[RMDB]
Chemical mapping of a 207-nucleotide RNA with 2A3 and DMS.
For DMS, 2,138 sequencing reads were counted.
It was measured as part of the RMDB library OK3TST.
RNA sequence: GGGAACGACUCGAGUAGAGUCGAAAAGCUAGUCGGAGACGACUAGCAACGAUCAGUUCGCUGAUCGGAACGUGCAUUCAAACGGGGUCGAAGCACGAAUAGCCGAGGGAGACCCCGAAACUCAGAAAGGAGAUAACAAAAAUAAAAAGCCCUCGGGGACGUCUGCUUGCUUCGGCGAGUGGACGUCAAAAGAAACAACAACAACAAC
Reactivity to 2A3 in 0.01 (KOAc 150mM, MgCl2 10mM, bicine 150mM(pH8.5), 24C), signal-to-noise 2, nucleotides 027 to 156: g000c000u000a000g000u000c000g000g020a050g000a150c010g010a000c010u000a000g000c000a000a020c000g020a000u010c000a000g020u040u070c140g020c080u010g000a000u000c000g010g010a090a030c040g000u020g030c050a190u000u050c050a080a100a070c000g010g000g000g000u010c000g020a040a010g020c020a000c020g000a020a040u100a140g080c000c020g000a000g000g000g000a030g030a000c050c000c010c020g000a000a000a010c000u000c010a050g300a170a210a030g140g000a020g010a010u090a060a050c060a030a070a040a020a020u150a080a060a000a050a010g080c010c030c000u000c010g000g000g050
Reactivity to DMS in 0.01 (KOAc 150mM, MgCl2 10mM, bicine 150mM(pH8.5), 24C), signal-to-noise 2, nucleotides 027 to 156: g000c000u000a010g040u010c010g040g010a300g060a240c030g010a000c000u000a020g060c010a030a010c020g010a000u000c010a010g000u000u000c300g040c010u000g030a030u000c000g000g000a020a060c010g010u000g030c020a260u000u000c010a020a120a180c040g010g010g030g020u000c010g000a130a160g010c020a080c020g000a110a190u000a170g030c020c000g000a030g040g040g040a130g000a060c010c000c010c000g010a020a030a010c010u000c030a150g000a070a210a250g010g010a090g000a100u010a060a130c040a010a090a040a050a200u030a010a070a050a100a190g030c010c000c010u000c010g040g030g010